[RMDB]
RNA sequence: GGGAACGACUCGAGUAGAGUCGAAAACACUAGCUGCAGCGUAAUAGCACAGCUCGUUUCUCCUAGGCUUCCCACAGUCUAGACAGAAACGUCAUCUUAGUGGGGAACGUCUUAAGGCUGUCGCGACCUUAAGUUGUACAAUUGUGACUAGCUGAUCGGAUGCUGUAAAGUUCGCUUUACAGCAUCCAAAAGAAACAACAACAACAAC
Reactivity to DMS in 0.01 (KOAc 150mM, MgCl2 10mM, bicine 150mM(pH8.5), 24C), signal-to-noise 1, nucleotides 027 to 156: c080a160c060u020a040g020c000u000g000c000a190g050c000g020u010a140a150u000a300g030c000a050c000a050g030c010u010c000g020u000u000u000c030u010c000c010u000a000g040g030c000u000u000c100c100c100a080c140a190g030u000c030u010a010g000a060c040a050g070a030a030a040c060g000u000c070a060u020c160u000u000a070g050u000g010g010g010g010a120a070c080g030u000c020u000u000a020a010g000g000c000u000g000u000c160g070c020g010a040c010c000u000u000a010a020g030u000u000g030u020a060c090a120a090u000u000g050u000g010a130c020u010a090g010c010u010g010a100u010c130
Reactivity to 2A3 in 0.01 (KOAc 150mM, MgCl2 10mM, bicine 150mM(pH8.5), 24C), signal-to-noise 6, nucleotides 027 to 156: c070a030c050u050a000g010c000u030g020c070a180g000c030g060u090a080a060u070a180g000c010a000c000a020g000c000u000c010g010u000u000u000c020u010c010c000u000a010g010g000c000u060u070c010c000c000a000c010a010g000u010c000u000a020g010a040c040a010g080a050a040a010c040g150u100c050a170u040c090u130u210a030g000u010g010g000g010g000a010a010c010g010u000c000u000u000a010a010g020g000c040u080g110u080c010g000c010g020a040c000c000u010u010a020a030g000u020u020g020u030a080c130a080a050u120u160g020u020g030a030c020u040a050g110c120u100g030a110u150c050
An RNA of 207 nucleotides, treated with DMS and 2A3 and read out base by base.
The DMS profile rests on 2,243 reads.
Source: RMDB library ARCHII, as collected in RNAgym.